[RMDB]
RNA sequence: GGGAACGACUCGAGUAGAGUCGAAAAUACUGAAGAGCAACAGAACCAGCAGGCGAUGAUGUCGUAGUGAGAACACCUCAUGAUGGAUGGUUUUGCAUUUAAUCUCAUCUCUUCUUUAUUCUCUUCAUAGACUUAUCUGUUUGUGUCAUGGUGUAUACCUGGUAGUAGGAUUCGUCCUACUACCAGGAAAAGAAACAACAACAACAAC
Reactivity to 2A3 in 0.01 (KOAc 150mM, MgCl2 10mM, bicine 150mM(pH8.5), 24C), signal-to-noise 4, nucleotides 027 to 156: u090a010c030u010g010a030a030g010a000g040c060a010a050c010a070g030a030a020c010c000a010g030c030a050g090g030c060g090a100u180g060a100u220g100u050c050g030u070a040g030u060g050a020g020a060a030c050a090c100c020u030c030a040u080g040a030u090g020g100a040u020g010g010u010u020u040u070g000c000a030u040u110u180a130a200u060c080u030c080a150u040c020u010c020u060u000c000u020u050u040a090u060u010c020u000c000u130u080c070a110u120a110g020a050c020u080u130a080u220c090u140g090u080u110u080g070u040g030u070c050a060u070g050g020u110g080u050a070u050a110
Reactivity to DMS in 0.01 (KOAc 150mM, MgCl2 10mM, bicine 150mM(pH8.5), 24C), signal-to-noise 2, nucleotides 027 to 156: u010a110c020u000g000a070a030g020a070g040c070a110a100c020a030g000a050a030c020c020a070g000c040a060g020g010c060g010a070u010g030a050u000g030u000c030g020u000a160g050u000g020a130g020a090a070c030a070c070c010u020c050a040u020g040a130u010g070g010a070u000g010g030u000u000u010u010g000c030a150u000u000u010a100a140u010c100u010c080a110u000c010u000c020u000u000c050u010u000u000a020u010u000c020u000c000u000u000c040a080u000a100g000a040c020u020u000a030u000c070u000g030u010u000u000g020u020g030u000c020a080u010g020g010u000g000u010a060u000a140